Overview: An RNA of 177 nucleotides, treated with 2A3 and DMS and read out base by base. Values are in units of 0.01, from 0 to 300, in steps of 10.
RNA sequence: GGGAACGACUCGAGUAGAGUCGAAAAGUACGGCACUGAGAACUGCUCGAAUAAAUGCAACAAUCGUGGGGUGUGCAACCACGAGUUGAAGUGUCACUGCGAUCCAGGCUGGGCACCACCCUAUUGAACUAAUGGCGUCAUUCGUGACGCCAUUAGUAAAAGAAACAACAACAACAAC
Reactivity to 2A3 in 0.01 (KOAc 150mM, MgCl2 10mM, bicine 150mM(pH8.5), 24C), signal-to-noise 1, nucleotides 027 to 126: g020u060a010c010g010g030c030a020c160u070g030a040g070a300a080c030u040g000c040u030c060g010a040a010u210a150a100a090u090g010c050a030a040c000a090a100u000c020g010u040g030g030g000g030u150g040u050g110c010a060a000c000c000a000c000g040a020g080u000u080g030a030a020g000u000g000u010c040a040c080u070g000c020g000a020u100c000c020a000g000g000c030u050g060g030g000c000a030c030c000a020c000c000c030u080a150u150u170g050a030
Reactivity to DMS in 0.01 (KOAc 150mM, MgCl2 10mM, bicine 150mM(pH8.5), 24C), signal-to-noise 2, nucleotides 027 to 126: g030u000a080c080g000g010c020a030c010u000g010a170g020a050a100c130u000g070c020u010c040g000a160a100u000a030a050a050u010g010c000a050a160c080a050a070u000c010g010u000g000g010g000g000u040g010u000g010c060a130a090c030c000a010c020g020a020g000u000u000g010a060a110g030u000g000u000c030a140c020u000g010c070g000a040u000c020c060a030g000g000c080u010g000g000g000c080a070c040c060a150c020c000c040u020a180u000u010g020a190

DMS adducts were read by reverse transcription with MarathonRT. Source: RMDB library OK2TST, as collected in RNAgym.